This 177-nucleotide RNA was probed chemically with DMS and 2A3. It was measured as part of the RMDB library OK2TRN. Reactivities are given for positions 27 through 126.
[RMDB]
RNA sequence: GGGAACGACUCGAGUAGAGUCGAAAAUGGCGAUGCUCUGAAAAUGCAAAUGGCAAAGCUUGGGGUAACUAUUACUGAUGGGAAAGAUAAGUCUCUUUCCACUAUUCCAGCCCGUCCACUGCUGGAACUUCGUCAACAGUUUCGACUGUUGACGAAGAAAAGAAACAACAACAACAAC
Reactivity to DMS in 0.01 (KOAc 150mM, MgCl2 10mM, bicine 150mM(pH8.5), 24C), signal-to-noise 2, nucleotides 027 to 126: u010g000g020c010g000a160u000g000c030u000c040u000g000a050a050a150a150u020g050c090a110a070a090u010g010g010c020a070a030a210g030c110u000u000g010g000g040g010u000a020a100c050u010a040u000u010a070c150u010g000a140u000g020g000g000a030a000a010g000a010u000a060a090g000u010c300u010c000u000u000u000c000c000a070c240u010a190u000u000c000c000a030g000c000c030c070g000u000c070c010a040c110u000g010c000u000g000g000a010a020
Reactivity to 2A3 in 0.01 (KOAc 150mM, MgCl2 10mM, bicine 150mM(pH8.5), 24C), signal-to-noise 2, nucleotides 027 to 126: u040g000g000c070g050a030u020g000c000u000c010u100g080a140a000a010a010u100g000c050a040a160a300u200g200g000c050a050a080a050g020c040u040u080g010g000g000g020u030a140a100c020u050a080u140u180a050c050u020g040a130u120g090g060g000a000a040a020g040a030u130a100a250g120u020c000u000c000u060u000u000c020c000a040c030u060a060u010u010c020c040a030g010c000c010c010g030u000c000c000a020c050u050g000c000u000g010g000a000a040
The 2A3 profile rests on 1,330 reads. For 2A3 the reverse transcriptase was SuperScript II with manganese. DMS adducts were read by reverse transcription with MarathonRT. The RNA was probed in 150 mM KOAc, 10 mM MgCl2 and 150 mM bicine (pH 8.5) at 24 C.